[RMDB]
Conditions: 150 mM KOAc, 10 mM MgCl2 and 150 mM bicine (pH 8.5), 24 C. The record gives the reactivity of an RNA of 177 nucleotides to DMS and 2A3.
RNA sequence: GGGAACGACUCGAGUAGAGUCGAAAACUUUGCGGGAGGGGCAGUAUCGCUGUAAAUGACGACUAACGGAUACGCGAUUAUUGCUAGUUGAAAACUACUCCAAUUCCCGUCUCGAUGCUUGAAAAAGAACUGCGACAUAUUUCGAUAUGUCGCAGUUAAAAGAAACAACAACAACAAC
Reactivity to DMS in 0.01 (KOAc 150mM, MgCl2 10mM, bicine 150mM(pH8.5), 24C), signal-to-noise 3, nucleotides 027 to 126: c100u030u010u000g020c040g000g000g020a040g000g000g010g000c010a000g020u010a020u010c020g000c010u020g090u000a020a060a190u040g000a220c120g030a160c210u020a120a100c040g020g000a300u010a010c040g000c030g010a030u010u050a000u000u000g000c040u010a040g000u000u000g050a120a100a020a100c150u000a080c050u000c040c090a070a230u010u010c000c000c000g020u000c060u010c090g000a130u000g000c080u000u010g000a030a040a080a070a050g000
Reactivity to 2A3 in 0.01 (KOAc 150mM, MgCl2 10mM, bicine 150mM(pH8.5), 24C), signal-to-noise 3, nucleotides 027 to 126: c020u070u000u160g000c010g000g040g000a060g010g010g030g010c000a000g010u020a000u000c000g010c050u170g030u020a080a210a140u160g050a090c110g070a140c070u110a280a020c040g020g000a020u030a090c010g020c040g070a020u010u140a010u120u040g020c000u010a130g030u030u120g130a050a090a040a040c020u180a040c000u000c020c000a040a080u020u020c000c000c010g070u010c020u030c020g100a080u100g080c050u020u060g130a110a060a000a040a000g120